[RMDB]
RNA sequence: GGGAACGACUCGAGUAGAGUCGAAAACCCUCACUCUUCGGAGUGAGGGAAAUCUGAUUCCCAAUAGCUGGGUAUCCGGGCUAAGACGGAAAGGCGUUGCCAAAAGAUCUGGCUUCGGCCAGAUCAAUCCUCCAAAGGAGUUCGCUCCUUUGGAGGAAAAAGAAACAACAACAACAAC
Reactivity to DMS in 0.01 (KOAc 150mM, MgCl2 10mM, bicine 150mM(pH8.5), 24C), signal-to-noise 1, nucleotides 027 to 126: c000c000c000u000c000a010c010u000c000u000u000c180g020g000a030g000u000g000a070g000g000g000a010a010a010u000c070u000g000a160u020u000c010c000c000a150a200u010a060g030c100u000g000g000g000u000a070u010c000c110g000g010g000c030u000a040a070g000a080c060g020g020a130a120a100g000g010c020g000u010u000g020c040c000a140a050a040a070g000a000u000c000u000g000g030c000u000u000c150g010g010c000c000a000g000a020u010c000a060a050
Description: The record gives the reactivity of an RNA of 177 nucleotides to DMS. Reactivities are rounded to 0.1 and cut off at 0 and 3. The data come from the RNA Mapping Database (RMDB), library M2PK50. The RNA was probed in 150 mM KOAc, 10 mM MgCl2 and 150 mM bicine (pH 8.5) at 24 C. High DMS reactivity at an A or C suggests that its Watson-Crick edge is free.